[RMDB]
RNA sequence: GGGAACGACUCGAGUAGAGUCGAAAAAGUGGCUCAUGCCUGUAAAUCCCAGCACUUUGGGAGCCUGAGGUGGGAGGAUCACUUGAGCUCAGGAGUUCAAGACCAGACUGGGGAACAUGGCAAAACCCGACAGAGUCAAGUUCGCUUGACUCUGUCGAAAAGAAACAACAACAACAAC
Reactivity to DMS in 0.01 (KOAc 150mM, MgCl2 10mM, bicine 150mM(pH8.5), 24C), signal-to-noise 2, nucleotides 027 to 126: a030g000u000g000g000c030u010c050a120u000g000c050c010u010g000u010a060a080a130u000c000c000c010a010g020c100a090c060u000u000u000g020g000g020a050g010c040c020u000g000a040g010g020u010g000g000g000a040g000g010a170u000c120a030c050u010u000g000a100g030c090u010c020a060g000g000a030g030u000u000c020a050a010g040a070c150c130a060g010a150c010u000g000g000g000g010a100a030c040a020u010g000g010c030a030a060a130a070c030c050